The record gives the reactivity of an RNA of 177 nucleotides to 2A3 and DMS. DMS adducts were read by reverse transcription with MarathonRT. Conditions: 150 mM KOAc, 10 mM MgCl2 and 150 mM bicine (pH 8.5), 24 C. The data come from the RNA Mapping Database (RMDB), library RFMREP.

RNA sequence: GGGAACGACUCGAGUAGAGUCGAAAAGUCACGUUCGCGUGACGUAGGGGCGCGGGUCGUGGGGGCGCCACAGUCUAUUUGACAGUGGAUUUCCCAAGAUCCGUGAUGAUACCACAGUUCGCUGUGGCACUAAAUACGCUUUCGAGCGUAUUUAGUGAAAAGAAACAACAACAACAAC
Reactivity to 2A3 in 0.01 (KOAc 150mM, MgCl2 10mM, bicine 150mM(pH8.5), 24C), signal-to-noise 4, nucleotides 027 to 126: g000u010c010a010c020g030u050u060c250g010c010g110u010g000a010c010g000u040a030g000g020g000g010c020g000c000g010g010g000u000c010g000u020g010g000g000g010g010c050g020c020c000a000c000a010g000u000c020u090a300u170u300u300g010a010c010a010g010u000g000g000a010u020u020u040c010c000c000a000a000g010a000u000c000c000g000u000g000a030u070g010a030u050a070c000c000a000c000a000g030u080u100c170g000c090u000g000u000g000g000
Reactivity to DMS in 0.01 (KOAc 150mM, MgCl2 10mM, bicine 150mM(pH8.5), 24C), signal-to-noise 4, nucleotides 027 to 126: g010u010c010a010c000g030u000u020c190g020c020g020u000g010a000c010g010u010a050g000g000g000g000c020g010c000g010g000g020u000c000g030u000g000g010g000g010g000c120g010c000c000a000c000a050g020u000c000u000a200u010u010u010g010a000c010a080g040u000g000g000a040u010u000u000c000c000c010a050a040g000a010u000c000c000g020u000g010a060u010g010a160u000a180c000c000a000c000a010g000u000u020c230g020c010u000g010u000g000g000